[RMDB]
RNA sequence: GGGAACGACUCGAGUAGAGUCGAAAAAAAGCUCUGAAGGACACGGAUGGGUAGGGGACACGUGGCUGGAGGCUCAGAGUUUGAGGCAGAGGGGAUCAGACCGUGCCAUGGGUCAUGCCAGGAGCCCCUACACUAAAGAUUUCGAUCUUUAGUGUAGAAAAGAAACAACAACAACAAC
Reactivity to 2A3 in 0.01 (KOAc 150mM, MgCl2 10mM, bicine 150mM(pH8.5), 24C), signal-to-noise 4, nucleotides 027 to 126: a000a000a000g040c030u020c020u030g040a100a030g050g020a030c020a020c100g040g040a090u090g030g020g060u070a050g030g020g000g020a020c040a010c160g060u040g040g000c050u040g050g050a040g060g000c020u020c030a050g040a020g030u050u110u110g050a060g020g000c040a010g040a060g070g030g010g000a010u070c020a020g050a050c010c020g020u030g010c020c010a040u060g040g000g020u040c030a020u070g030c000c010a030g030g020a040g010c000c000c010
Reactivity to DMS in 0.01 (KOAc 150mM, MgCl2 10mM, bicine 150mM(pH8.5), 24C), signal-to-noise 9, nucleotides 027 to 126: a060a060a070g010c030u000c020u010g010a130a110g010g010a080c090a050c090g000g000a120u000g010g000g020u000a070g000g010g000g010a080c090a070c090g010u000g010g000c030u000g010g010a110g010g010c040u000c030a060g000a090g010u000u010u000g010a070g010g020c060a070g010a130g000g000g000g010a120u010c100a070g010a060c030c030g020u000g010c030c040a080u000g010g010g000u000c060a070u000g000c020c030a090g010g010a140g010c010c010c020
This 177-nucleotide RNA was probed chemically with 2A3 and DMS.
For DMS, 23,001 sequencing reads were counted.
DMS adducts were read by reverse transcription with MarathonRT.
For 2A3 the reverse transcriptase was SuperScript II with manganese.
The reactions ran in a buffer of 150 mM KOAc, 10 mM MgCl2 and 150 mM bicine (pH 8.5), at 24 C.